RNA sequence: GGGAACGACUCGAGUAGAGUCGAAAAAAUGGCACUCAUUAGCCAAUCAAUCAAGAACUUGAAGGGUGGUAUCAGCCAACAGCCUGACAUCCUUCGUUAUCCAGACCAAGGGUCACGCCAAGUUAACGGUUGGUCUUCGGAGACCGAGGGCCUCCAACACUCUUGCGCAAUUCGUUGCGCAAGAGUGAAAAGAAACAACAACAACAAC
Reactivity to 2A3 in 0.01 (KOAc 150mM, MgCl2 10mM, bicine 150mM(pH8.5), 24C), signal-to-noise 1, nucleotides 027 to 156: a000a000u070g020g020c050a030c010u070c080a230u230u130a020g000c000c030a010a000u010c010a000a040u040c030a040a060g160a070a080c000u050u040g040a080a000g000g030g000u000g010g070u140a050u290c030a000g040c000c070a110a060c070a290g080c080c010u010g010a000c000a030u000c000c000u020u010c000g000u000u000a000u000c010c050a030g120a160c000c070a120a090g010g000g110u040c030a000c010g030c010c050a030a000g030u060u060a070a080c180g050g000u010u030g000g030u010c060u070u050c000g090g030a160g040a150c020c020g000a000g010g000g000c020c030u020c060c020a040a000